Description:
This 177-nucleotide RNA was probed chemically with 2A3 and DMS. The reactions ran in a buffer of 150 mM KOAc, 10 mM MgCl2 and 150 mM bicine (pH 8.5), at 24 C. The data come from the RNA Mapping Database (RMDB), library OK2TST.

[RMDB]
RNA sequence: GGGAACGACUCGAGUAGAGUCGAAAAACAGUAUCAUAUAGACAUAGAUCAUACAACAAAGAAGUUGAUAUCAUAAUUGUGUUAGGUGCUGGUAUUUUUACCGAAUUUGUCACACCAAUGCUUGCAGUACGUCCAUACGAUUCGUCGUAUGGACGUAAAAAGAAACAACAACAACAAC
Reactivity to 2A3 in 0.01 (KOAc 150mM, MgCl2 10mM, bicine 150mM(pH8.5), 24C), signal-to-noise 2, nucleotides 027 to 126: a000c030a020g010u030a050u040c020a050u160a040u090a300g150a070c020a020u050a000g010a030u020c000a040u080a110c010a010a010c010a110a160a120g220a110a050g080u020u020g020a090u020a000u100c030a040u050a220a110u160u110g010u000g050u030u050a000g030g000u000g050c040u000g070g030u020a130u030u110u000u040u080a070c030c000g000a030a070u050u030u090g060u000c040a020c000a000c010c000a020a040u120g060c000u030u120g000c070a050g070
Reactivity to DMS in 0.01 (KOAc 150mM, MgCl2 10mM, bicine 150mM(pH8.5), 24C), signal-to-noise 3, nucleotides 027 to 126: a050c030a030g010u000a010u010c020a100u000a180u020a140g010a030c020a060u000a050g040a050u000c090a040u000a100c030a010a040c050a110a080a150g010a170a150g000u000u000g000a080u000a020u000c070a070u000a100a090u010u000g010u000g000u000u000a060g010g060u000g010c030u000g010g000u010a010u000u010u010u000u000a120c030c030g010a040a070u010u010u000g010u010c070a070c090a060c090c090a040a030u010g010c040u000u020g010c110a210g010